Source: RMDB library TTRDES, as collected in RNAgym. Structure probing data (DMS and 2A3) for a 177-nucleotide construct. 2A3 adducts were read by reverse transcription with SuperScript II with manganese. For 2A3, 20,311 sequencing reads were counted. DMS adducts were read by reverse transcription with MarathonRT. Values cover nucleotides 27 to 126.
RNA sequence: GGGAACGACUCGAGUAGAGUCGAAAAGAUAUGGAGAUUACAUGUAGCGACUGGUCGGAAACGACCAAGCUCGCGCAGAUAUGUUAUCUCCUAAGUCAAAACCAGGAUUAUCUUCGGAUAAUCCUGGGCAAUUGUACUUGUUCGCAAGUACAAUUGCAAAAGAAACAACAACAACAAC
Reactivity to DMS in 0.01 (KOAc 150mM, MgCl2 10mM, bicine 150mM(pH8.5), 24C), signal-to-noise 4, nucleotides 027 to 126: g010a010u000a020u020g000g010a020g010a010u000u000a010c000a010u000g020u000a010g020c010g020a040c030u000g010g000u010c010g030g010a010a010a020c000g010a010c000c000a010a010g020c300u000c000g030c000g030c180a150g000a000u000a010u000g000u000u000a010u000c000u000c000c000u000a000a070g000u010c000a140a080a110a300c000c000a010g010g000a010u000u000a010u000c000u000u010c270g020g000a010u000a000a000u000c000c000u000g000g000
Reactivity to 2A3 in 0.01 (KOAc 150mM, MgCl2 10mM, bicine 150mM(pH8.5), 24C), signal-to-noise 3, nucleotides 027 to 126: g000a000u020a010u050g000g000a000g000a010u020u030a010c010a000u020g010u060a040g000c000g000a010c010u000g020g000u000c000g000g010a010a000a000c000g000a000c000c000a000a000g020c060u010c000g000c000g010c080a020g030a090u010a000u010g000u010u030a010u000c000u000c000c000u000a010a000g000u000c000a010a050a050a170c010c000a000g010g010a010u010u020a000u010c020u080u170c300g170g000a000u000a000a010u000c000c000u000g000g020